Chemical mapping of a 177-nucleotide RNA with 2A3 and DMS. For DMS the reverse transcriptase was MarathonRT. Values cover nucleotides 27 to 126. The data come from the RNA Mapping Database (RMDB), library OK1LIB. The 2A3 profile rests on 1,765 reads. For DMS, 1,258 sequencing reads were counted.
[RMDB]
RNA sequence: GGGAACGACUCGAGUAGAGUCGAAAAGAAAUAAUGGAGUCCAAUAAGCACCUUGAGAUAUCUAACGUGGAUGAAAAAUCGACGGACUUCACAAACACUAUAUCUGUGCGAAAGCGAAAGGUGUAAAGGCAAAUGAAUACUUCGGUAUUCAUUUGCCAAAAGAAACAACAACAACAAC
Reactivity to 2A3 in 0.01 (KOAc 150mM, MgCl2 10mM, bicine 150mM(pH8.5), 24C), signal-to-noise 2, nucleotides 027 to 126: g080a000a040a030u200a030a150u140g020g010a020g030u020c020c020a040a160u200a120a020g050c000a000c000c000u000u030g000a010g010a030u040a020u150c130u200a060a080c100g000u020g130g020a060u090g070a020a140a030a000a000u160c050g000a030c080g080g010a000c000u000u010c020a000c050a050a040a000c000a000c030u060a030u000a010u110c020u000g130u040g020c000g050a050a010a000g000c030g010a100a000a010g020g000u020g000u020a030a090a040
Reactivity to DMS in 0.01 (KOAc 150mM, MgCl2 10mM, bicine 150mM(pH8.5), 24C), signal-to-noise 1, nucleotides 027 to 126: g000a130a050a040u000a130a000u040g040g000a030g020u000c030c030a080a100u070a100a210g000c010a000c020c010u000u000g030a010g000a010u010a000u000c240u130a060a060c190g040u000g000g000a130u000g000a070a050a020a040a060u000c050g000a120c010g000g000a090c050u000u000c000a090c080a020a010a180c070a020c030u000a000u050a000u000c030u020g000u000g010c020g000a110a140a200g000c020g120a060a000a000g000g000u000g050u000a090a100a050